[RMDB]
RNA sequence: GGGAACGACUCGAGUAGAGUCGAAAACAACAAAAUACACAGUUUGGUCAAGGAACACCUGUUCAACAAGCACCACAUCAACAGACAUCACAUCAACAGACAUCACAGCAACCAACACAACAAGAACAAAGUAAUCCAUUUGAGAACUUUGAUGCUACAUCCUUCUGAAUUUCGAUUCAGAAGGAUGAAAAGAAACAACAACAACAAC
Reactivity to 2A3 in 0.01 (KOAc 150mM, MgCl2 10mM, bicine 150mM(pH8.5), 24C), signal-to-noise 8, nucleotides 027 to 156: c020a010a010c030a000a080a040a030u240a050c080a010c020a080g060u080u080u080g020g010u030c040a060a060g040g010a060a020c040a030c040c030u050g020u070u050c050a090a080c020a100a060g030c030a040c030c010a040c010a050u070c040a030a070c010a040g100a050c010a040u080c030a040c000a080u080c020a040a080c000a050g070a040c010a020u030c010a030c010a040g000c000a010a030c020c020a040a020c050a010c010a120a050c010a060a050g060a070a010c010a000a020a020g020u060a050a040u010c020c050a110u080u140u240g140a140g010a090a060c010u020u000u030g030a030u100g020c010u040a020
Reactivity to DMS in 0.01 (KOAc 150mM, MgCl2 10mM, bicine 150mM(pH8.5), 24C), signal-to-noise 3, nucleotides 027 to 156: c040a090a220c070a090a050a060a170u000a060c020a080c080a090g020u000u000u000g010g000u040c050a050a120g000g000a140a110c120a070c050c040u010g010u010u000c060a080a080c080a080a090g040c040a100c020c050a050c030a060u000c030a040a060c030a050g020a050c030a060u000c040a060c090a110u020c030a040a080c030a090g030a070c040a060u000c000a080c100a080g040c020a060a080c040c030a010a070c040a100c040a050a080c070a040a080g010a080a140c010a040a020a040g020u010a040a160u000c000c040a220u000u010u010g000a090g000a090a070c020u000u000u000g000a080u000g000c030u010a140